[RMDB]
RNA sequence: GGGAACGACUCGAGUAGAGUCGAAAACCCGUGCACACCGGGGACCCUAUCCAUCCUGUCUAGUUGGGAGGACUAGGAGUUCCACAUGUGGGACCCUCAGUUCCUGCUGCCUUCAGAACCAGGCCCAAUUCUUCGGAUGAUUCGUCAUCCGAAGAAUAAAAGAAACAACAACAACAAC
Reactivity to DMS in 0.01 (KOAc 150mM, MgCl2 10mM, bicine 150mM(pH8.5), 24C), signal-to-noise 2, nucleotides 027 to 126: c020c000c010g040u000g010c100a080c070a080c120c130g000g020g000g010a090c050c020c000u010a050u000c030c020a090u000c010c010u000g020u000c080u010a090g030u010u020g000g000g020a060g010g000a030c110u010a000g010g010a100g000u000u000c010c010a070c090a090u010g040u000g000g010g000a050c010c020c010u010c090a020g020u010u000c030c010u000g010c040u000g000c080c010u000u000c080a060g000a100a100c100c030a040g000g030c030c010c040a080
Reactivity to 2A3 in 0.01 (KOAc 150mM, MgCl2 10mM, bicine 150mM(pH8.5), 24C), signal-to-noise 1, nucleotides 027 to 126: c000c000c010g000u070g010c030a130c030a050c030c040g000g000g070g060a040c040c000c000u000a030u000c010c050a140u000c010c010u070g100u070c070u100a100g070u200u160g100g000g000a010g000g030a000c030u010a000g030g020a140g030u030u000c030c010a000c020a110u150g030u070g080g000g000a020c020c000c020u000c070a070g020u120u000c010c000u050g050c000u020g040c030c000u050u050c030a020g030a090a020c020c000a000g010g030c040c000c000a050
Structure probing data (DMS and 2A3) for a 177-nucleotide construct.
As a SHAPE reagent, 2A3 marks flexible, mostly unpaired nucleotides at the ribose 2'-OH.
High DMS reactivity at an A or C suggests that its Watson-Crick edge is free.
The RNA was probed in 150 mM KOAc, 10 mM MgCl2 and 150 mM bicine (pH 8.5) at 24 C.
2A3 adducts were read by reverse transcription with SuperScript II with manganese.
Reactivities are given for positions 27 through 126.